[RMDB]
Description: Chemical mapping of a 177-nucleotide RNA with DMS and 2A3. For DMS, 3,556 sequencing reads were counted. For DMS the reverse transcriptase was MarathonRT. The 2A3 profile rests on 11,784 reads.

RNA sequence: GGGAACGACUCGAGUAGAGUCGAAAAGAUAUGGAACUAGUUGGGAGAGCCCUCGGAAACGAGUGAGCUCGACGAUCAACGGUUCCUAAGUCAAAGUGGAACGCAAAGUUCGCUUUGCGUUCCACAACCCAUGUUCAUAGUUCGCUAUGAACAUGGGAAAAGAAACAACAACAACAAC
Reactivity to DMS in 0.01 (KOAc 150mM, MgCl2 10mM, bicine 150mM(pH8.5), 24C), signal-to-noise 3, nucleotides 027 to 126: g010a050u010a300u010g000g000a000a010c000u000a050g030u000u000g000g000g010a140g020a020g010c000c010c010u010c010g020g000a080a160a200c010g000a010g000u000g000a150g020c000u000c000g000a090c230g020a060u020c000a010a010c000g000g000u000u000c000c000u010a020a050g000u000c040a050a070a090g000u000g000g000a010a000c000g000c030a010a030a010g010u000u000c220g020c010u000u000u000g000c000g000u010u000c010c000a000c010a020a090
Reactivity to 2A3 in 0.01 (KOAc 150mM, MgCl2 10mM, bicine 150mM(pH8.5), 24C), signal-to-noise 3, nucleotides 027 to 126: g040a020u090a030u180g000g000a010a000c020u070a300g020u010u010g020g000g000a040g000a000g040c000c020c000u000c010g020g020a040a060a050c010g000a000g020u190g070a100g010c010u010c010g060a030c010g000a010u030c010a000a010c020g010g000u000u010c000c000u010a110a040g040u040c040a060a060a080g010u010g000g000a000a010c010g000c010a030a000a000g010u080u100c120g060c150u000u000u010g010c000g000u000u000c000c010a000c000a000a000